[RMDB]
RNA sequence: GGGAACGACUCGAGUAGAGUCGAAAACUGCUGCGCACUAUGAAAGGAAAGGCGCUGGUCAGCGUGAACGAUAUCCCGCAAAUGCGCUUGGCCUUCAACGGCCUCGCCAUGCAGCGGUUGUCCAUCAACUACACCGUGGGUGCGUCUGGGCGCGGCCAGGGGGAAUAAUUUUCGAAUUAUUCCCCCUAAAAGAAACAACAACAACAAC
Reactivity to 2A3 in 0.01 (KOAc 150mM, MgCl2 10mM, bicine 150mM(pH8.5), 24C), signal-to-noise 4, nucleotides 027 to 156: c020u040g010c010u010g000c020g030c000a050c090u130a070u300g090a180a070a060g070g050a080a070a030g030g000c020g010c070u080g040g090u080c040a080g010c030g040u040g040a060a030c050g040a080u030a060u200c030c040c000g010c010a060a100a010u130g020c070g000c040u020u020g020g020c020c000u060u130c100a110a100c100g000g000c000c000u010c000g000c000c000a030u100g000c020a010g000c010g000g010u010u060g020u000c030c130a050u100c010a070a080c020u120a030c040a030c080c030g040u090g060g050g050u060g030c000g020u020c050u060g030g010g000c010g010c000g000g000c020c040
Reactivity to DMS in 0.01 (KOAc 150mM, MgCl2 10mM, bicine 150mM(pH8.5), 24C), signal-to-noise 3, nucleotides 027 to 156: c020u000g010c050u000g000c010g030c060a130c080u010a120u020g010a090a120a120g020g000a060a070a090g020g040c000g040c010u000g030g030u010c080a070g000c050g040u010g000a040a110c060g030a160u010a300u000c130c010c000g010c040a050a060a120u000g000c040g000c020u000u000g000g020c010c010u000u000c180a070a130c190g010g020c020c010u000c060g000c000c060a080u000g010c040a090g010c000g010g000u000u010g020u000c040c130a120u010c070a070a090c000u000a070c020a090c020c050g020u000g010g010g000u010g000c010g010u000c050u000g000g020g020c010g040c040g010g010c030c080